[RMDB]
RNA sequence: GGGAACGACUCGAGUAGAGUCGAAAAACACAGUGGCUCACACCUGUAAUCCCAGCAUUUUAGGAGGCUGAGGUGGGAAGAUGGCUUAAGCCCAGGAGUUUGAGGCUGUAGAGCUAUGAUCACACCACUGCCCUUCAGCCUGGGUGACAGAGCAAGACAAUUGGUAAUCAUUCGUGAUUACCAAUUGAAAAGAAACAACAACAACAAC
Reactivity to 2A3 in 0.01 (KOAc 150mM, MgCl2 10mM, bicine 150mM(pH8.5), 24C), signal-to-noise 4, nucleotides 027 to 156: a000c080a010c010a060g120u140g110g000c000u030c030a070c000a030c040c040u050g030u090a050a050u070c000c010c000a010g010c030a060u060u140u120u280a060g010g020a020g000g000c020u020g020a020g020g020u010g010g020g020a040a020g080a060u040g010g000c000u040u050a040a000g000c000c020c000a070g070g110a180g120u150u230u180g080a110g010g000c000u010g030u120a060g010a000g030c010u010a010u070g110a050u040c010a010c000a000c050c010a020c020u020g010c010c020c010u030u020c010a010g010c000c010u010g000g010g000u030g020a030c040a060g030a010g000c010a000a030g070a020
Reactivity to DMS in 0.01 (KOAc 150mM, MgCl2 10mM, bicine 150mM(pH8.5), 24C), signal-to-noise 5, nucleotides 027 to 156: a100c060a070c040a080g000u010g010g030c030u010c050a150c030a060c020c010u010g010u000a130a110u010c000c000c010a070g010c020a140u010u000u020u000a140g030g010a020g010g020c010u010g000a040g010g040u010g010g020g030a050a060g010a100u000g010g000c010u000u000a120a110g000c000c000c000a100g030g020a190g000u010u000u000g010a150g020g000c000u010g020u000a120g000a060g020c020u000a050u000g010a200u000c050a050c020a120c010c010a070c020u000g010c060c010c000u000u000c010a080g010c140c020u010g000g020g030u000g010a060c030a040g020a100g030c030a080a090g000a190
Source: RMDB library OK3TST, as collected in RNAgym. This 207-nucleotide RNA was probed chemically with 2A3 and DMS. DMS adducts were read by reverse transcription with MarathonRT. Values cover nucleotides 27 to 156.